[RMDB]
RNA sequence: GGGAACGACUCGAGUAGAGUCGAAAACGGUGCGCUGACGUCCUCUAGCACGUAUUCUUUUACCCCAGGCACUACCAAUAUCGUGGACGGUUUUAGCAUUAACAACCGCGCUUACGACAGCAGCGAGACAUCCCCAGUCAUUCGUGACUGGGGAUGUAAAAGAAACAACAACAACAAC
Reactivity to DMS in 0.01 (KOAc 150mM, MgCl2 10mM, bicine 150mM(pH8.5), 24C), signal-to-noise 2, nucleotides 027 to 126: c100g010g030u000g020c000g030c010u020g000a060c180g010u030c000c040u010c050u000a110g020c040a030c080g000u010a080u010u000c030u000u000u000u010a170c040c010c010c040a050g010g010c040a040c040u000a100c070c020a100a110u050a080u000c040g050u000g000g000a090c050g020g000u000u000u000u000a080g000c180a040u020u010a020a090c180a060a090c040c010g000c060g000c040u000u000a050c070g020a050c120a060g040c060a050g010c030g020a100g010
Reactivity to 2A3 in 0.01 (KOAc 150mM, MgCl2 10mM, bicine 150mM(pH8.5), 24C), signal-to-noise 2, nucleotides 027 to 126: c010g000g010u070g060c080g000c050u010g030a020c090g040u010c020c030u030c040u040a020g040c040a000c080g000u060a200u060u080c030u010u150u100u180a080c000c000c000c000a000g030g020c000a010c040u090a060c040c030a000a110u110a060u210c060g030u050g020g060a060c020g020g020u000u000u040u040a040g000c050a090u000u180a050a040c060a050a000c000c010g010c030g000c070u070u200a040c040g050a020c030a040g020c000a000g010c000g010a010g020
The data come from the RNA Mapping Database (RMDB), library OK2TST. Structure probing data (DMS and 2A3) for a 177-nucleotide construct. For DMS, 1,758 sequencing reads were counted. The RNA was probed in 150 mM KOAc, 10 mM MgCl2 and 150 mM bicine (pH 8.5) at 24 C. DMS adducts were read by reverse transcription with MarathonRT. The 2A3 profile rests on 1,430 reads.